Chemical mapping of a 177-nucleotide RNA with 2A3 and DMS. DMS adducts were read by reverse transcription with MarathonRT. For 2A3 the reverse transcriptase was SuperScript II with manganese. Reactivities are rounded to 0.1 and cut off at 0 and 3.
[RMDB]
RNA sequence: GGGAACGACUCGAGUAGAGUCGAAAAGGGCUGUCAUUGGACAACGUGGAGAUGGUACUGCGCUAUGGGCUGACAAUGGCUCUUGAGGCGAGUGAGGCCUCAGGCAACUUGACACCGGAGGACCGGCCUCUACGUCGAGAUUCGUCUCGACGUAGAGAAAAGAAACAACAACAACAAC
Reactivity to 2A3 in 0.01 (KOAc 150mM, MgCl2 10mM, bicine 150mM(pH8.5), 24C), signal-to-noise 3, nucleotides 027 to 126: g070g020g000c030u030g050u100c010a050u090u220g070g010a030c020a090a070c100g050u050g010g030a100g000a060u060g020g030u040a070c010u040g050c020g000c060u040a070u160g040g000g000c010u020g010a030c030a090a080u080g030g000c010u020c000u060u070g030a030g030g000c060g000a070g150u130g100a060g090g110c000c000u020c000a000g000g030c010a040a090c030u050u080g020a020c010a030c060c000g000g020a040g050g070a040c000c000g040g030c000
Reactivity to DMS in 0.01 (KOAc 150mM, MgCl2 10mM, bicine 150mM(pH8.5), 24C), signal-to-noise 3, nucleotides 027 to 126: g010g010g000c050u010g020u010c060a150u000u010g010g020a100c060a050a070c120g010u000g000g000a100g020a120u000g010g010u010a050c090u000g010c050g020c080u000a050u010g020g000g010c030u000g000a090c150a080a080u000g000g000c040u000c030u000u010g010a060g010g000c000g000a160g000u000g000a100g000g000c010c000u010c010a020g000g020c130a050a110c060u000u000g020a110c110a100c030c020g000g000a130g000g000a120c050c030g010g000c170